Annotation: Conditions: 150 mM KOAc, 10 mM MgCl2 and 150 mM bicine (pH 8.5), 24 C. The record gives the reactivity of an RNA of 207 nucleotides to 2A3. The data come from the RNA Mapping Database (RMDB), library OK3TST.
[RMDB]
RNA sequence: GGGAACGACUCGAGUAGAGUCGAAAACGAUCUGUUCGCAGAUCGAGCUACGGAGACGUAGCAAAGCGAGCGAGGGCACGGGCGCUCGCACUACCGGAACUAAAGCCAUAUCCACGUGUGCUAGGAUAUGGCCGUGCCCAAAGAAACAGCACACGAAAUCGAUCAGGUAUUUCGAUACCUGAUCGAUAAAAGAAACAACAACAACAAC
Reactivity to 2A3 in 0.01 (KOAc 150mM, MgCl2 10mM, bicine 150mM(pH8.5), 24C), signal-to-noise 3, nucleotides 027 to 156: c010g010a000u010c010u020g050u110u100c280g000c120a000g000a000u000c000g000a060g000c010u010a000c000g030g030a080g020a040c020g000u000a000g000c000a060a080a000g000c000g010a000g000c000g010a060g010g000g000c010a000c010g110g080g010c020g010c000u000c000g000c020a000c010u080a030c000c020g100g090a090a050c060u180a220a070a010g000c000c000a010u000a000u010c010c020a040c140g010u000g000u010g000c000u010a030g000g010a010u000a000u010g000g000c010c000g000u010g000c000c010c000a090a190a030g110a030a160a040c060a030g000c010a000c010a000c020g040a040a140